[RMDB]
RNA sequence: GGGAACGACUCGAGUAGAGUCGAAAACGUAACACCGUCGAGCCGGUAGGCGAUGGUGGUGAGCAGCCGGUUGGAGGAGGUGACGCGAUCCGUGCCGGUGUUGAGAAGUGCAAAACAUCCGGUGCCAUCAUGAUACUGAGUUCGCUCAGUAUCAUGAAAAAGAAACAACAACAACAAC
Reactivity to DMS in 0.01 (KOAc 150mM, MgCl2 10mM, bicine 150mM(pH8.5), 24C), signal-to-noise 7, nucleotides 027 to 126: c060g010u010a130a140c030a030c020c000g030u000c010g000a130g030c010c010g010g020u000a090g010g010c010g010a110u000g010g010u000g000g030u000g000a160g020c040a210g010c020c020g000g010u000u000g010g000a090g010g000a120g010g020u000g000a070c100g010c060g000a090u000c050c050g020u000g010c010c010g000g010u000g000u000u000g010a150g010a100a120g010u000g010c120a060a090a030a030c040a030u010c010c010g010g010u000g010c050c170a150
Reactivity to 2A3 in 0.01 (KOAc 150mM, MgCl2 10mM, bicine 150mM(pH8.5), 24C), signal-to-noise 3, nucleotides 027 to 126: c030g050u070a080a030c010a010c040c000g040u030c040g010a010g030c020c010g040g100u080a160g150g010c030g000a020u040g000g020u020g000g030u050g020a030g010c000a000g020c000c010g000g050u060u110g120g030a080g040g150a070g000g040u050g020a020c030g000c020g050a030u000c050c030g010u010g000c000c000g000g010u020g020u010u050g030a080g030a170a070g080u160g120c050a050a060a000a040c020a020u080c030c000g000g000u020g020c050c000a060
Structure probing data (DMS and 2A3) for a 177-nucleotide construct. DMS adducts were read by reverse transcription with MarathonRT. For 2A3 the reverse transcriptase was SuperScript II with manganese. The 2A3 profile rests on 5,823 reads.